[RMDB]
RNA sequence: GGGAACGACUCGAGUAGAGUCGAAAACCUACUCAAUACGUCCUCGUCGUACGGAACGGUAACAUGUUUUCCGAACAUCCGCGCUUGGGUAUACGAGUAUACACCUUACCCAACCCUCGCCAACGGGAGUGCAUCCACGAGUUCGCUCGUGGAUGAAGAUAUCCGUUUUCUUCGGAAAACGGAUAUCAAAAGAAACAACAACAACAAC
Reactivity to 2A3 in 0.01 (KOAc 150mM, MgCl2 10mM, bicine 150mM(pH8.5), 24C), signal-to-noise 8, nucleotides 027 to 156: c000c010u010a030c020u010c010a050a080u050a100c040g130u090c010c000u060c050g150u050c020g020u080a070c050g000g030a100a040c010g020g020u070a050a040c080a210u260g070u090u060u050u030c010c000g020a070a050c050a110u030c010c010g010c000g010c050u010u030g000g010g020u020a040u020a040c100g010a010g060u020a020u060a030c070a080c010c050u110u160a090c010c010c020a050a090c030c010c000u040c040g080c070c040a100a070c030g020g000g010a050g040u120g010c000a000u000c000c000a000c000g010a000g000u080u080c190g070c100u000c000g000u000g000g000a000u000g000a000a000
Reactivity to DMS in 0.01 (KOAc 150mM, MgCl2 10mM, bicine 150mM(pH8.5), 24C), signal-to-noise 2, nucleotides 027 to 156: c030c010u000a050c010u010c060a060a110u010a080c050g000u000c010c010u000c060g020u020c160g020u000a070c040g000g010a080a210c030g020g000u010a050a060c080a150u000g000u000u000u020u000c010c000g030a090a090c050a090u000c010c000g040c030g000c030u000u000g000g000g000u000a050u000a100c110g020a140g050u000a090u000a090c050a090c090c070u000u000a030c010c010c010a090a110c040c010c010u020c100g010c050c060a070a110c080g020g000g020a120g010u000g000c030a000u000c000c010a010c000g030a050g010u000u000c300g020c000u000c000g000u000g000g020a000u000g010a030a080
The data come from the RNA Mapping Database (RMDB), library M2RFPK.
The record gives the reactivity of an RNA of 207 nucleotides to 2A3 and DMS.
For DMS, 5,034 sequencing reads were counted.
For 2A3, 7,356 sequencing reads were counted.
The RNA was probed in 150 mM KOAc, 10 mM MgCl2 and 150 mM bicine (pH 8.5) at 24 C.